Structure probing data (2A3 and DMS) for a 207-nucleotide construct. For DMS the reverse transcriptase was MarathonRT. 2A3 adducts were read by reverse transcription with SuperScript II with manganese. For 2A3, 4,494 sequencing reads were counted. The reactions ran in a buffer of 150 mM KOAc, 10 mM MgCl2 and 150 mM bicine (pH 8.5), at 24 C. The DMS profile rests on 7,553 reads.

RNA sequence: GGGAACGACUCGAGUAGAGUCGAAAAUAAAGUGUGUGAAUCUAGACAAUUUUGAAAGAGUAUGUACAAUAAUACCUGCAUUCAUGCUAUGCUUUCUACUUUCUAAGGCCCUUUUGCUUACAUGAUCUCAUUGGAUGUGAACAAUUGAGUGGGGGAAUCAGGUAUAGUAGUUCGCUACUAUACCUGAAAAAGAAACAACAACAACAAC
Reactivity to 2A3 in 0.01 (KOAc 150mM, MgCl2 10mM, bicine 150mM(pH8.5), 24C), signal-to-noise 6, nucleotides 027 to 156: u150a010a050a020g050u030g010u010g010u020g070a050a040u030c040u060a050g040a110c070a110a110u060u110u110u190g070a100a070a030g050a020g020u050a030u080g040u040a040c050a090a070u110a140a050u060a120c010c030u020g030c030a020u020u090c010a020u070g000c030u060a030u120g020c000u030u100u020c020u050a100c030u080u100u040c060u080a050a070g040g000c020c000c000u040u080u070u070g020c020u040u060a020c010a060u090g040a080u090c020u000c030a060u040u070g050g020a050u050g060u040g110a050a030c020a030a060u110u100g010a030g020u070g010g000g000g000g010a010a040
Reactivity to DMS in 0.01 (KOAc 150mM, MgCl2 10mM, bicine 150mM(pH8.5), 24C), signal-to-noise 3, nucleotides 027 to 156: u000a100a070a120g030u000g030u010g040u000g020a060a060u000c040u000a130g020a120c090a060a090u000u000u000u010g010a120a070a170g010a140g010u000a040u000g010u000a090c090a060a130u000a090a120u000a070c040c020u010g030c050a120u000u000c050a070u020g010c030u000a070u000g020c040u000u000u010c040u010a070c060u000u000u000c040u000a050a110g050g040c020c010c020u000u000u010u020g000c030u000u000a070c020a050u000g010a120u000c070u010c090a130u000u010g000g020a100u010g020u000g020a040a030c030a020a040u010u000g020a070g030u000g000g020g010g050g010a090a190